Chemical mapping of a 177-nucleotide RNA with 2A3. Conditions: 150 mM KOAc, 10 mM MgCl2 and 150 mM bicine (pH 8.5), 24 C.

[RMDB]
RNA sequence: GGGAACGACUCGAGUAGAGUCGAAAAAUCAACAUCAUGCGGGGACGGCGUCCUUUGAGCCACUGCAGCGACGUCUACGCAUGGGAGAGCAGACGAUCGUUUUGAAUCCAGGCGAGGACGACACCAACCCUCGAGCGGGAUUCGUCCCGCUCGAGGGAAAAGAAACAACAACAACAAC
Reactivity to 2A3 in 0.01 (KOAc 150mM, MgCl2 10mM, bicine 150mM(pH8.5), 24C), signal-to-noise 2, nucleotides 027 to 126: a000u160c110a090a040c020a070u170c000a020u130g020c040g010g040g010g010a000c020g020g020c000g000u000c000c030u040u010u150g100a060g000c040c060a050c030u120g020c010a050g000c000g000a000c000g000u000c010u030a040c050g000c010a090u090g000g030g000a070g000a000g030c030a040g020a050c040g110a300u030c030g010u010u000u080u200g050a030a020u020c020c040a050g020g020c030g030a020g040g000a020c010g020a000c020a010c000c010a020a040